[RMDB]
RNA sequence: GGGAACGACUCGAGUAGAGUCGAAAACACGCGGAGUACGAUCGAGGGUACAGCACAAUCUCAACUUUUGUUGAAACUUAACUACAUCCUAUAUGGAGAAGGAACAAAGGACUGUACUACUUUGUAGACCGACUUAAAUAUUCGUAUUUAAGUCGGUAAAAGAAACAACAACAACAAC
Reactivity to 2A3 in 0.01 (KOAc 150mM, MgCl2 10mM, bicine 150mM(pH8.5), 24C), signal-to-noise 8, nucleotides 027 to 126: c070a000c020g060c040g050g050a070g040u100a050c050g030a120u100c040g040a050g040g030g000u030a010c010a010g000c050a010c030a090a100u040c020u020c050a040a050c030u070u120u180u300g010u000u020g030a080a050a040c030u080u050a060a030c020u090a050c070a100u010c000c020u150a130u040a080u300g010g020a050g020a030a050g030g030a050a010c050a070a070a010g030g030a020c020u020g000u030a010c000u040a130c000u070u070u140g040u010a040g050
Reactivity to DMS in 0.01 (KOAc 150mM, MgCl2 10mM, bicine 150mM(pH8.5), 24C), signal-to-noise 9, nucleotides 027 to 126: c080a150c110g010c050g010g000a070g010u000a070c100g010a090u010c090g010a090g000g000g010u000a020c030a020g020c080a100c140a070a090u010c090u000c030a030a070c040u010u010u020u010g010u000u000g010a030a080a120c080u000u010a060a110c050u010a070c120a160u000c010c010u000a090u000a080u010g010g000a030g000a090a080g000g010a080a060c110a040a050a050g000g010a110c030u000g010u000a030c020u000a100c030u000u000u000g010u000a130g010

Structure probing data (2A3 and DMS) for a 177-nucleotide construct.
Values cover nucleotides 27 to 126.
Conditions: 150 mM KOAc, 10 mM MgCl2 and 150 mM bicine (pH 8.5), 24 C.
It was measured as part of the RMDB library OK2TST.